[RMDB]
Chemical mapping of a 207-nucleotide RNA with 2A3 and DMS. The reactions ran in a buffer of 150 mM KOAc, 10 mM MgCl2 and 150 mM bicine (pH 8.5), at 24 C.
RNA sequence: GGGAACGACUCGAGUAGAGUCGAAAACUACUGCACAACUCUAGGGGACACCAUUUACAUUGUGGUCCCUGGCGGCCCUGCCAGAGAUCACUGCAGCAGGCCCCAGAUAGUGACAGUGAUCCAGAACUUUGGGACAGAGAGGCUGCUUGGUGAUGGGCAAGUUUGGAUAUUUCGAUAUCCAAACUUGAAAAGAAACAACAACAACAAC
Reactivity to 2A3 in 0.01 (KOAc 150mM, MgCl2 10mM, bicine 150mM(pH8.5), 24C), signal-to-noise 3, nucleotides 027 to 156: c050u060a020c000u010g020c000a030c000a060a110c070u000c010u120a150g000g010g000g020a020c030a060c140c040a070u080u160u150a120c110a150u200u160g000u010g000g000u000c000c010c000u000g000g010c000g010g110c010c000c040u080g000c000c000a000g020a000g000a010u010c000a010c030u070g030c020a050g010c030a040g050g050c010c010c000c000a010g000a010u040a020g000u020g050a070c000a010g000u000g020a040u020c020c010a020g030a100a030c030u100u120u110g020g010g000a020c040a030g050a010g010a000g050g020c000u000g000c000u050u040g020g030u030g030a060u070g000g010g040
Reactivity to DMS in 0.01 (KOAc 150mM, MgCl2 10mM, bicine 150mM(pH8.5), 24C), signal-to-noise 2, nucleotides 027 to 156: c030u000a140c010u000g000c020a060c000a070a200c150u000c020u000a130g050g000g020g020a100c010a080c010c030a160u000u000u000a100c080a170u010u010g030u000g020g030u010c010c000c010u000g020g010c030g030g020c120c080c070u010g000c000c030a040g010a030g000a030u000c010a020c010u000g040c050a030g030c070a110g010g000c020c010c000c020a080g000a070u000a120g000u010g010a110c010a050g000u000g020a120u010c010c030a130g000a100a110c070u000u000u010g020g020g000a070c050a080g030a110g000a100g020g020c020u000g000c020u010u000g010g020u010g010a110u000g030g020g030